[RMDB]
RNA sequence: GGGAACGACUCGAGUAGAGUCGAAAAGGCUUUGGUACGCGACUUAAAUAUAGAGCCCUAUUUUUUGGGCACCUUUGAUAAAAGGUUUCCGGGGUUCAUUCGCGCCGAACAAAUGUGUUGUGCCAUCGUGAACACGGCCGGUCGUGAAACCGGCGGAAUGAUUAUUUCGUUUCGACGAAAUAAUCAUAAAAGAAACAACAACAACAAC
Reactivity to 2A3 in 0.01 (KOAc 150mM, MgCl2 10mM, bicine 150mM(pH8.5), 24C), signal-to-noise 2, nucleotides 027 to 156: g040g010c080u040u030u060g060g000u080a030c010g010c000g060a080c070u110u260a030a250a090u280a170u070a100g020a000g050c000c020c030u040a200u150u140u070u050u170u150g000g000g010c030a000c000c020u060u000u060g160a150u280a200a190a000a040g010g000u010u020u020c030c030g020g030g000g010u040u010c020a020u040u040c000g000c020g020c050c000g030a030a010c030a040a110a130u210g050u010g000u040u060g020u010g010c020c010a070u080c090g020u030g130a060a050c040a040c080g090g000c010c010g030g010u020c080g090u040g190a170a050a040c000c030g000g010c050g010g020a100
Reactivity to DMS in 0.01 (KOAc 150mM, MgCl2 10mM, bicine 150mM(pH8.5), 24C), signal-to-noise 1, nucleotides 027 to 156: g000g000c040u000u000u020g010g020u000a020c040g030c040g020a070c130u010u000a040a090a140u010a210u000a110g030a090g020c030c000c000u020a050u030u010u020u000u000u000g030g030g030c120a020c000c000u000u000u030g010a210u010a100a050a060a070g000g020u020u000u000c030c030g010g110g020g010u010u000c060a210u000u010c040g030c050g000c050c050g000a060a090c070a030a080a070u010g010u000g040u000u000g010u000g030c000c060a120u000c090g010u010g020a070a080c050a100c070g010g030c020c000g010g040u000c010g000u010g000a180a060a020c000c000g000g020c000g030g000a070